[RMDB]
Annotation:
The record gives the reactivity of an RNA of 177 nucleotides to 2A3 and DMS. Values cover nucleotides 27 to 126. The reactions ran in a buffer of 150 mM KOAc, 10 mM MgCl2 and 150 mM bicine (pH 8.5), at 24 C. It was measured as part of the RMDB library OK2TRN.
RNA sequence: GGGAACGACUCGAGUAGAGUCGAAAACACAUCCGUGGAUCAGUGGAAAUACGGCGUACACACACGAUAUUCACGGAACUGUCGCCGUACAUCUUAAGAAGAGUUUGGCAAAACGGAACUGGAAAAAUACCAUUUAAAUCUUCGGAUUUAAAUGGUAAAAAGAAACAACAACAACAAC
Reactivity to 2A3 in 0.01 (KOAc 150mM, MgCl2 10mM, bicine 150mM(pH8.5), 24C), signal-to-noise 6, nucleotides 027 to 126: c030a000c010a050u010c000c020g020u020g030g000a090u050c040a090g040u040g050g060a050a090a010u090a030c050g060g030c050g150u150a010c050a000c000a000c000a000c070g050a070u060a090u250u110c050a030c010g000g000a010a000c010u020g010u020c020g000c010c000g010u010a030c020a190u030c010u090u120a130a070g070a060a020g040a080g070u060u090u110g060g000c000a050a050a010a020c030g040g020a020a060c090u150g100g090a060a060a000a030a030
Reactivity to DMS in 0.01 (KOAc 150mM, MgCl2 10mM, bicine 150mM(pH8.5), 24C), signal-to-noise 9, nucleotides 027 to 126: c060a090c150a130u000c010c010g040u000g010g000a080u010c150a180g020u000g010g000a070a190a230u000a020c020g000g010c050g000u010a060c080a070c140a220c100a120c030g000a120u000a080u010u010c100a060c020g000g000a050a100c170u000g010u000c050g000c010c010g010u000a030c110a080u000c050u010u000a090a100g000a120a090g010a060g000u010u000u000g020g010c060a050a060a090a050c090g010g000a060a060c120u000g000g010a020a070a060a100a130